RNA sequence: GGGAACGACUCGAGUAGAGUCGAAAAUAAAAACACAUCCGGUCGAGCGCCGUCGACAGGAGCCUGUGUAGAGAACGCAGUAUCCCUACCACCCCUCCAGACGGAGGAAGGGGGCGGGAGCGCCAAACGGUGAUGAGUUCUUCGGAACUCAUUACUGAAAAGAAACAACAACAACAAC
Reactivity to 2A3 in 0.01 (KOAc 150mM, MgCl2 10mM, bicine 150mM(pH8.5), 24C), signal-to-noise 9, nucleotides 027 to 126: u040a000a060a010a020a000c030a010c000a070u020c010c010g020g000u020c010g010a030g050c110g030c100c060g130u020c010g010a000c010a020g010g010a010g030c040c100u040g000u000g010u060a020g050a010g020a190a010c040g000c030a010g030u100a180u080c010c000c000u030a080c010c010a070c020c020c000c000u000c000c010a110g060a290c190g080g010a020g010g010a030a160g020g000g000g000g000c040g000g000g010a020g010c010g000c010c020a030a060a020
Reactivity to DMS in 0.01 (KOAc 150mM, MgCl2 10mM, bicine 150mM(pH8.5), 24C), signal-to-noise 9, nucleotides 027 to 126: u060a040a070a080a090a030c060a040c050a100u010c010c000g000g010u000c020g000a080g000c060g000c060c050g000u000c010g000a030c020a020g010g010a040g010c140c120u010g010u010g010u000a080g010a140g010a090a100c090g010c040a060g010u030a120u010c000c000c000u010a170c010c010a050c020c020c000c000u000c000c010a180g040a130c190g010g000a050g000g000a030a020g010g000g000g010g010c300g000g000g000a030g010c030g000c060c060a070a090a150